RNA sequence: GGGAACGACUCGAGUAGAGUCGAAAAGUCAAUGUUAAAGUGACAAGCAUUAGAGGUACUGUGGCUAUCACUUCUUUAAUAGGUCCUGUAGUGGGUGACGUUAUUGAUGCAACUGGUUACAUUUGCUACACUGGUUUGAAUUCGCGUGGCCAUUAUAGUUCGCGCGAAGUUUCGACUUCGCGCGAACAAAAGAAACAACAACAACAAC
Reactivity to 2A3 in 0.01 (KOAc 150mM, MgCl2 10mM, bicine 150mM(pH8.5), 24C), signal-to-noise 1, nucleotides 027 to 156: g010u030c030a040a050u180g000u170u210a120a040a010g000u010g080a080c000a030a000g160c010a080u070u140a130g000a030g150g000u060a000c030u050g020u050g040g000c000u040a060u170c060a070c030u060u000c000u020u150u050a300a140u120a190g030g010u000c000c010u010g000u030a070g080u080g000g030g010u000g060a000c010g040u080u000a060u030u100g050a040u070g000c000a060a030c050u090g000g020u140u010a000c000a080u070u040u170g000c000u010a010c050a030c100u000g020g030u040u000u130g110a130a060u120u120c000g040c100g050u090g000g020c010c000a000u090u050a090u090a010
Notes
Source: RMDB library OK3TST, as collected in RNAgym. An RNA of 207 nucleotides, treated with 2A3 and read out base by base. The RNA was probed in 150 mM KOAc, 10 mM MgCl2 and 150 mM bicine (pH 8.5) at 24 C.